RNA sequence: GGGAACGACUCGAGUAGAGUCGAAAAGGGGUCAUCUCGGGCGCUAGGGAGCCUGUGGCUGAAGCCUCCACGGCCACAAGGCGAAGAACUAGCGUCUCUAGCGUGGAUGACGGAGGCACCCAAAAGUUUUCAUUGCAGUUCGCUGCAAUGAAAACAAGUUUCCUUAAUGAUUCGUCAUUAAGGAAACAAAAGAAACAACAACAACAAC
Reactivity to 2A3 in 0.01 (KOAc 150mM, MgCl2 10mM, bicine 150mM(pH8.5), 24C), signal-to-noise 5, nucleotides 027 to 156: g070g010g020g030u020c020a020u020c100u170c210g020g020g000c010g000c010u010a000g010g020g030a010g010c000c000u000g010u000g000g000c000u010g020a110a020g010c000c000u000c000c000a040c020g010g000c000c010a010c030a090a150g010g000c040g120a180a020g030a040a000c000u000a000g000c020g000u000c000u010c010u030a030g050c070g190u300g140g000a010u010g010a000c000g010g000a000g000g000c010a030c000c000c000a060a140a020a020g000u010u000u000u000c010a010u000u000g000c000a000g020u040u120c130g120c120u000g000c000a000a000u000g000a000a000a000a000c000a010a000
Reactivity to DMS in 0.01 (KOAc 150mM, MgCl2 10mM, bicine 150mM(pH8.5), 24C), signal-to-noise 1, nucleotides 027 to 156: g010g010g030g040u000c080a060u000c040u010c060g010g000g010c040g020c020u000a010g020g020g000a100g010c000c000u000g020u000g010g020c020u000g010a050a120g000c030c010u000c010c000a300c000g000g010c010c000a030c020a050a090g070g010c000g020a110a150g020a120a180c030u000a030g000c010g020u000c000u010c050u010a130g020c060g010u010g020g010a060u000g000a050c040g000g020a050g040g040c020a060c010c010c010a060a110a130a150g010u000u000u000u000c000a000u000u000g000c000a040g010u000u010c300g000c000u000g030c000a000a020u000g000a000a000a000a010c000a050a110
Structure probing data (2A3 and DMS) for a 207-nucleotide construct. DMS adducts were read by reverse transcription with MarathonRT. The 2A3 profile rests on 7,923 reads. The reactions ran in a buffer of 150 mM KOAc, 10 mM MgCl2 and 150 mM bicine (pH 8.5), at 24 C. For 2A3 the reverse transcriptase was SuperScript II with manganese.